[RMDB]
RNA sequence: GGGAACGACUCGAGUAGAGUCGAAAACAUAGUAGUCUGCGGAACCGGUGAGUACACCGGAAUUGCCAGGACGACCGGGUCCUUUCCAUUGGAUCAAACCCGCUCAAUGCCUGGAGAUUUGGGCGUGUUCCUUACGGAGAUUCGUCUCCGUAAGGAAAAAAGAAACAACAACAACAAC
Reactivity to DMS in 0.01 (KOAc 150mM, MgCl2 10mM, bicine 150mM(pH8.5), 24C), signal-to-noise 3, nucleotides 027 to 126: c080a040u010a100g000u020a100g020u020c000u010g000c070g010g000a130a150c000c010g000g040u010g000a210g010u040a090c030a010c010c010g010g010a010a010u000u020g010c010c030a200g000g020a010c080g000a050c120c020g000g000g010u010c050c060u000u000u010c050c070a170u030u030g020g010a100u000c140a070a100a140c050c010c000g010c160u000c010a080a060u000g000c020c000u000g000g010a070g010a090u010u000u010g010g020g000c030g010u020g000
Reactivity to 2A3 in 0.01 (KOAc 150mM, MgCl2 10mM, bicine 150mM(pH8.5), 24C), signal-to-noise 4, nucleotides 027 to 126: c010a010u160a060g080u000a020g010u010c040u040g050c050g080g030a040a050c000c000g010g030u010g040a190g050u180a070c000a000c020c000g000g000a020a020u010u040g060c000c010a020g010g010a020c020g000a010c020c000g030g000g010u020c020c000u040u050u110c020c060a160u070u210g020g000a010u070c000a010a040a050c000c000c000g000c010u020c010a030a050u170g060c040c000u080g080g070a080g030a090u050u080u060g000g000g000c030g010u050g040